Structure probing data (DMS and 2A3) for a 177-nucleotide construct. The 2A3 profile rests on 2,329 reads. It was measured as part of the RMDB library OK2TRN. Values cover nucleotides 27 to 126.
RNA sequence: GGGAACGACUCGAGUAGAGUCGAAAAGUCGGUUGGUUCAAGGACUUUGUAGACCAAGCCUUUGCCGCUAUCGGUGCCGUGGUGGCUGCCGUGGCUCAGUGGUUCCAAGACGCGUGGAACAACGCUGGACUCGUAUCUUGUUCGCAAGAUACGAGUCAAAAGAAACAACAACAACAAC
Reactivity to DMS in 0.01 (KOAc 150mM, MgCl2 10mM, bicine 150mM(pH8.5), 24C), signal-to-noise 3, nucleotides 027 to 126: g030u010c020g010g030u000u010g010g010u000u000c110a080a080g010g020a040c050u000u010u000g000u020a110g000a090c030c070a100a070g000c050c070u000u000u010g010c050c070g010c030u000a050u010c080g020g040u000g020c040c020g010u010g020g010u000g000g010c040u010g060c060c050g000u010g010g010c030u000c030a020g020u010g020g000u010u000c030c020a050a090g020a110c150g000c080g020u010g000g010a060a090c140a050a040c020g040c070u010g010
Reactivity to 2A3 in 0.01 (KOAc 150mM, MgCl2 10mM, bicine 150mM(pH8.5), 24C), signal-to-noise 2, nucleotides 027 to 126: g060u010c030g050g170u040u120g080g070u110u090c060a110a060g110g020a090c010u040u090u100g080u130a030g060a020c000c020a060a020g030c030c020u080u150u100g020c000c000g000c040u050a030u140c010g000g000u090g040c030c010g070u090g050g090u200g040g020c100u120g000c020c000g070u010g030g000c000u000c010a040g000u060g030g000u000u000c030c010a020a000g120a050c080g000c020g010u040g010g030a160a150c050a020a050c030g050c090u050g130